[RMDB]
RNA sequence: GGGAACGACUCGAGUAGAGUCGAAAAUAAAAAGGGACGUGCAGCAGGCGAGGAACCCAAGCAGCUGUCCCGGGUGCCAUCGCCCUACGUGAGGACACGAGGCGUGGAUAGCACCAGGCCUAAAAAACACCUAUGGUUGAUUCGUCAACCAUAGGUGAAAAGAAACAACAACAACAAC
Reactivity to 2A3 in 0.01 (KOAc 150mM, MgCl2 10mM, bicine 150mM(pH8.5), 24C), signal-to-noise 2, nucleotides 027 to 126: u070a010a040a000a000a030g010g000g040a030c080g080u070g010c010a090g000c000a020g040g030c010g080a080g070g140a080a020c010c000c000a020a010g040c010a000g040c020u140g010u040c020c010c000g000g000g000u000g000c010c010a030u010c020g000c000c000c010u130a200c030g000u000g050a230g140g240a120c020a000c040g010a000g000g030c100g010u020g120g010a050u020a040g000c010a000c010c000a020g020g050c000c000u060a090a120a020a020a000a000
Reactivity to DMS in 0.01 (KOAc 150mM, MgCl2 10mM, bicine 150mM(pH8.5), 24C), signal-to-noise 2, nucleotides 027 to 126: u050a030a050a040a090a120g010g000g010a020c040g030u020g020c050a050g030c130a120g000g000c010g010a150g000g010a120a040c010c000c060a120a140g010c040a120g010c030u000g000u000c010c000c010g000g000g010u010g010c010c020a050u010c010g000c000c010c010u000a050c020g010u010g010a210g010g010a210c040a000c000g010a040g010g010c110g020u010g000g000a030u000a050g000c040a030c000c010a090g010g010c020c020u010a000a040a060a090a030a110

Structure probing data (2A3 and DMS) for a 177-nucleotide construct.
It was measured as part of the RMDB library M2PK90.
Conditions: 150 mM KOAc, 10 mM MgCl2 and 150 mM bicine (pH 8.5), 24 C.
2A3 adducts were read by reverse transcription with SuperScript II with manganese.
For DMS, 2,000 sequencing reads were counted.
DMS adducts were read by reverse transcription with MarathonRT.